Structure probing data (DMS and 2A3) for a 177-nucleotide construct.

RNA sequence: GGGAACGACUCGAGUAGAGUCGAAAAACAAAAUACGCCAGCUUCUCAAAGGUGUCACCCUUGACAAGUUGCGUGAUUAUUUAGCUGACUAUGACGUAGCAGUCACUGCCGGCCCAUUCAUGGAUAACAAUCUUAGAAAGUUCGCUUUCUAAGAUUGAAAAGAAACAACAACAACAAC
Reactivity to DMS in 0.01 (KOAc 150mM, MgCl2 10mM, bicine 150mM(pH8.5), 24C), signal-to-noise 7, nucleotides 027 to 126: a090c080a100a050a050a040u000a030c020g000c070c040a020g010c010u000u000c250u000c010a020a010a030g000g010u010g010u010c230a080c060c010c020u000u000g000a020c070a020a010g010u010u000g010c120g020u010g010a100u000u000a040u000u000u000a090g010c020u000g010a050c030u000a070u000g000a030c050g010u000a170g020c120a150g000u000c010a020c070u010g010c010c000g000g000c010c020c030a070u000u000c130a080u010g010g000a100u010a060a160
Reactivity to 2A3 in 0.01 (KOAc 150mM, MgCl2 10mM, bicine 150mM(pH8.5), 24C), signal-to-noise 4, nucleotides 027 to 126: a000c040a030a080a010a020u110a020c010g010c020c020a010g000c010u020u000c010u010c030a060a060a020g010g010u070g130u160c050a080c020c000c000u000u000g010a010c000a030a010g010u020u010g030c030g030u020g040a040u010u140a060u060u100u120a020g020c010u020g020a050c020u030a030u080g030a010c040g030u030a030g030c040a020g010u020c020a010c040u020g000c000c010g040g020c000c010c000a010u080u070c060a140u130g070g000a010u010a050a030